[RMDB]
This 177-nucleotide RNA was probed chemically with 2A3 and DMS. It was measured as part of the RMDB library TTRDES. Reactivities are given for positions 27 through 126. For 2A3 the reverse transcriptase was SuperScript II with manganese. The reactions ran in a buffer of 150 mM KOAc, 10 mM MgCl2 and 150 mM bicine (pH 8.5), at 24 C. In probing experiments dimethyl sulfate is read out at A N1 and C N3, which are open when not base-paired.

RNA sequence: GGGAACGACUCGAGUAGAGUCGAAAAGAUAUGGAUCCCGAAGUCAGCGAUAAGCUGCUCUCGGAAACGAGAGGCAGCUUUUGACGCUGCCGAGGGAUCCUAAGUCAAAGAGUACUUCGGUACUCAAUCAUGUACACAACUUCGGUUGUGUACAUGAAAAAGAAACAACAACAACAAC
Reactivity to 2A3 in 0.01 (KOAc 150mM, MgCl2 10mM, bicine 150mM(pH8.5), 24C), signal-to-noise 2, nucleotides 027 to 126: g040a010u090a040u160g020g000a010u010c010c010c000g010a040a020g080u170c030a000g010c000g020a100u010a130a000g000c020u010g020c010u000c000u000c000g030g070a070a080a070c020g000a010g020a050g160g020c010a010g000c000u010u000u010u060g000a000c000g020c000u000g000c020c000g010a090g010g000g000a000u000c000c000u000a010a010g000u000c030a120a070a060g000a010g000u000a010c030u110u220c300g150g010u020a000c010u000c000a000a050
Reactivity to DMS in 0.01 (KOAc 150mM, MgCl2 10mM, bicine 150mM(pH8.5), 24C), signal-to-noise 5, nucleotides 027 to 126: g000a040u000a300u000g000g000a010u010c000c000c000g000a200a140g000u000c010a000g020c000g040a240u010a020a020g000c000u000g010c010u010c000u000c000g010g010a140a120a190c010g020a000g000a080g000g040c000a000g010c000u000u000u000u000g020a160c100g010c000u000g000c030c010g010a300g010g010g000a010u000c010c000u010a010a070g000u000c050a100a130a130g000a020g000u000a000c000u000u010c220g020g010u000a000c000u000c000a080a110
About this RNA:
For DMS, 4,922 sequencing reads were counted.